[RMDB]
RNA sequence: GGGAACGACUCGAGUAGAGUCGAAAACAAUCGGAGUAUGAGGCCUACCUCGAAUCCAUGCUGAACGAGGUAAAUACCGAUGACAUGGAGUAAGCGAAAGACCGUUUCAUAUACCAUCGAACAGUUACCGAAAAUCAGUAUUCGUACUGAUUUUCGGAAAAGAAACAACAACAACAAC
Reactivity to DMS in 0.01 (KOAc 150mM, MgCl2 10mM, bicine 150mM(pH8.5), 24C), signal-to-noise 3, nucleotides 027 to 126: c070a120a050u020c080g010g050a300g060u020a070u020g000a120g020g020c100c050u010a110c130c000u010c010g000a110a140u000c010c030a020u030g010c180u000g000a120a270c090g000a030g020g010u010a060a050a140u000a110c020c020g010a070u000g000a110c060a120u000g000g010a070g000u030a090a080g050c030g050a030a050a040g000a040c110c130g000u000u000u000c040a120u000a080u020a150c030c060a060u000c190g010a050a060c060a030g010u000u000a090
Reactivity to 2A3 in 0.01 (KOAc 150mM, MgCl2 10mM, bicine 150mM(pH8.5), 24C), signal-to-noise 2, nucleotides 027 to 126: c010a000a090u120c060g020g000a020g000u090a060u110g040a010g060g040c020c030u040a040c020c020u020c000g010a020a020u040c000c000a050u100g010c110u110g020a110a040c040g020a060g040g020u030a080a150a020u200a060c040c020g040a060u070g050a020c020a030u050g020g010a030g020u080a120a040g070c010g060a100a020a010g070a040c030c000g010u020u000u050c040a010u050a000u020a100c010c020a070u060c020g030a060a040c020a090g070u060u070a090